Overview: This 177-nucleotide RNA was probed chemically with DMS. Source: RMDB library TTRDEL, as collected in RNAgym. The reactions ran in a buffer of 150 mM KOAc, 10 mM MgCl2 and 150 mM bicine (pH 8.5), at 24 C.

RNA sequence: GGGAACGACUCGAGUAGAGUCGAAAAGAUAUGGAGAUUACAGCUAGCUCGGUCGGAAACGACGGAGCUUGGACCUGUACGGUCUCCUAAGUCAAAAGGCGAGAAAAGGUUCGCCUUUUCUCGCCAACAUGGGGGGUACGUUCGCGUACCCCCCAUGAAAAGAAACAACAACAACAAC
Reactivity to DMS in 0.01 (KOAc 150mM, MgCl2 10mM, bicine 150mM(pH8.5), 24C), signal-to-noise 1, nucleotides 027 to 126: g000a010u020a270u000g000g000a000g020a030u000u000a010c000a020g040c080u000a030g010c000u000c020g010g040u010c000g000g010a120a080a120c010g000a000c010g100g000a040g000c000u000u020g040g000a130c300c010u030g010u010a100c300g000g000u010c010u000c010c000u000a040a150g000u010c050a070a130a060a080g020g010c000g000a020g010a000a000a010a010g000g000u000u040c230g000c000c000u000u020u000u040c010u000c000g010c000c000a010a030